[RMDB]
RNA sequence: GGGAACGACUCGAGUAGAGUCGAAAAUCAACGCCCUGGAGGCGGGCGACCGCAAGGUGGAGAAGGCGCAGGAGGACGUCAGCAAGAACCUGGUCUCGAUCAAGAACAUGCUGCACGGUAGCAGCGAACAGAGUUGAUACUUCGGUAUCAACUCUGUAAAAGAAACAACAACAACAAC
Reactivity to DMS in 0.01 (KOAc 150mM, MgCl2 10mM, bicine 150mM(pH8.5), 24C), signal-to-noise 2, nucleotides 027 to 126: u000c100a120a280c060g000c010c000c040u010g010g020a080g000g020c110g010g000g000c070g000a120c030c010g000c170a140a020g000g010u010g010g000a140g000a080a110g010g000c080g000c070a060g020g010a100g000g010a060c090g000u000c040a060g000c050a060a100g000a090a090c040c020u010g000g000u000c020u010c090g010a070u000c060a050a090g020a080a090c150a110u010g000c020u000g000c030a050c080g010g010u020a120g000c020a000g010c020g020a060
Reactivity to 2A3 in 0.01 (KOAc 150mM, MgCl2 10mM, bicine 150mM(pH8.5), 24C), signal-to-noise 2, nucleotides 027 to 126: u050c010a000a130c020g010c010c010c010u060g100g000a030g020g080c060g040g030g000c020g100a070c020c010g010c040a050a030g040g020u050g030g010a080g020a070a020g040g000c040g030c080a030g030g030a040g000g010a020c020g020u060c010a010g000c000a060a060g000a040a010c010c010u040g020g010u020c010u010c060g090a190u060c080a070a030g040a080a040c020a030u210g000c000u020g000c030a030c110g130g010u060a030g000c010a010g000c010g020a010